[RMDB]
RNA sequence: GGGAACGACUCGAGUAGAGUCGAAAAGAUCGGACACGACCGAAGGAGCGUCAGCCAAUCAAUAGCCCGCACUAAUGACAGGCGCGGCCCACAGCUAGGCGGGCACAGCCGCUGCAGAGUGCCUGGAGACUAGGUUAUAGUUCGCUAUAACCUAGUCAAAAGAAACAACAACAACAAC
Reactivity to 2A3 in 0.01 (KOAc 150mM, MgCl2 10mM, bicine 150mM(pH8.5), 24C), signal-to-noise 9, nucleotides 027 to 126: g020a020u050c030g010g020a030c050a050c190g120a060c030c030g070a100a110g140g050a080g030c050g030u030c030a020g020c020c000a030a050u040c030a020a080u090a130g040c010c000c000g010c010a060c040u090a150a150u150g050a070c020a050g030g010c020g020c040g090g020c000c010c000a070c020a020g070c080u140a070g040g070c000g020g020g020c010a010c010a010g010c010c030g010c020u030g000c020a010g030a010g100u020g010c010c000u020g000g020a050
Reactivity to DMS in 0.01 (KOAc 150mM, MgCl2 10mM, bicine 150mM(pH8.5), 24C), signal-to-noise 9, nucleotides 027 to 126: g000a060u000c030g010g010a090c120a080c070g010a070c030c010g030a120a140g010g000a120g000c060g000u010c070a120g010c020c010a060a060u010c050a080a080u020a150g000c010c010c000g020c040a060c040u020a080a080u020g020a120c120a070g000g010c030g000c080g000g000c020c000c020a090c080a140g010c130u020a080g010g020c050g000g000g010c020a050c070a100g000c030c030g000c060u010g000c040a050g000a080g000u010g000c090c020u000g000g000a300